[RMDB]
RNA sequence: GGGAACGACUCGAGUAGAGUCGAAAAGGCGUCUUCGCUGCCUCGGCCGCCCUGCACUGACCGGUAGCCGCCGUAAUAGCGGCAUUGUUCCCAUAAACGGAUGUGGGUGUGGGUGCCGAAGUAGCAGAUUAGCGAUAUGAUUCGUCAUAUCGCUAAUAAAAGAAACAACAACAACAAC
Reactivity to DMS in 0.01 (KOAc 150mM, MgCl2 10mM, bicine 150mM(pH8.5), 24C), signal-to-noise 7, nucleotides 027 to 126: g010g010c140g010u000c050u000u010c140g010c010u000g010c010c020u000c010g000g000c030c080g010c050c010c000u010g030c010a020c010u000g010a100c020c010g000g000u000a140g000c000c000g010c000c050g020u010a140a100u030a100g010c000g020g010c000a090u010u010g000u000u000c000c010c000a170u010a030a110a100c020g000g010a150u010g020u010g000g010g010u000g020u000g000g000g010u000g000c000c000g010a020a030g010u000a020g030c030a110g000
Reactivity to 2A3 in 0.01 (KOAc 150mM, MgCl2 10mM, bicine 150mM(pH8.5), 24C), signal-to-noise 2, nucleotides 027 to 126: g110g040c070g110u050c070u160u120c120g000c010u010g000c000c000u010c000g010g000c040c060g040c020c000c010u050g010c010a020c020u080g120a070c010c000g010g000u040a030g000c000c010g000c000c000g030u070a040a040u130a140g010c010g000g000c010a010u040u240g010u010u020c010c000c020a040u140a030a190a010c020g020g030a100u140g090u190g300g050g000u040g020u040g030g010g000u030g000c000c000g000a000a000g010u020a000g000c010a010g010
An RNA of 177 nucleotides, treated with DMS and 2A3 and read out base by base.
The DMS profile rests on 17,950 reads.
2A3 adducts were read by reverse transcription with SuperScript II with manganese.
The data come from the RNA Mapping Database (RMDB), library OK2TRN.
The reactions ran in a buffer of 150 mM KOAc, 10 mM MgCl2 and 150 mM bicine (pH 8.5), at 24 C.
DMS adducts were read by reverse transcription with MarathonRT.